[RMDB]
RNA sequence: GGGAACGACUCGAGUAGAGUCGAAAAGGGGUCACGAUGGAGAGGAGAACUACACCGACGAUCACCUGAAGCCUCCACGGGUGGGAGGUGCUCCUUGAGGUCGUGACGGAGGCACCCAAAAACAUCAUAAAGAAACUUCGGUUUCUUUAUGAUGUAACAUUUAGUAACCCUUCGGGGUUACUAAAUGAAAAGAAACAACAACAACAAC
Reactivity to DMS in 0.01 (KOAc 150mM, MgCl2 10mM, bicine 150mM(pH8.5), 24C), signal-to-noise 1, nucleotides 027 to 156: g030g000g080g010u000c030a020c050g000a080u000g010g030a300g010a020g050g010a260g030a090a090c020u000a300c030a070c060c000g020a110c160g000a120u010c020a010c000c020u010g000a080a200g010c020c000u000c010c020a280c000g000g000g040u000g030g020g010a060g000g060u010g010c000u010c000c030u000u000g000a300g000g040u000c000g030u010g000a010c020g000g020a030g060g040c090a160c060c030c020a020a080a100a120a080c000a020u000c010a000u020a000a030a020g000a000a020a020c000u000u000c300g080g000u000u000u000c000u010u000u010a000u030g000a000u000g020u000a030a160
Reactivity to 2A3 in 0.01 (KOAc 150mM, MgCl2 10mM, bicine 150mM(pH8.5), 24C), signal-to-noise 2, nucleotides 027 to 156: g000g000g020g000u010c010a010c020g020a040u090g100g070a050g000a010g150g060a030g000a110a030c150u300a060c170a010c020c010g230a280c020g010a060u020c010a000c010c000u010g060a090a010g020c000c000u000c020c010a030c040g000g000g000u020g010g000g010a010g020g010u000g010c000u000c010c000u000u040g040a060g000g070u020c000g000u010g000a000c010g000g040a020g010g000c030a060c000c000c000a060a170a030a000a020c000a000u000c000a010u000a000a010a000g010a020a000a000c030u090u140c300g100g010u020u000u020c000u000u000u000a000u000g000a000u000g000u000a000a010

This 207-nucleotide RNA was probed chemically with DMS and 2A3. Conditions: 150 mM KOAc, 10 mM MgCl2 and 150 mM bicine (pH 8.5), 24 C. It was measured as part of the RMDB library RNAMAK. 2A3 adducts were read by reverse transcription with SuperScript II with manganese.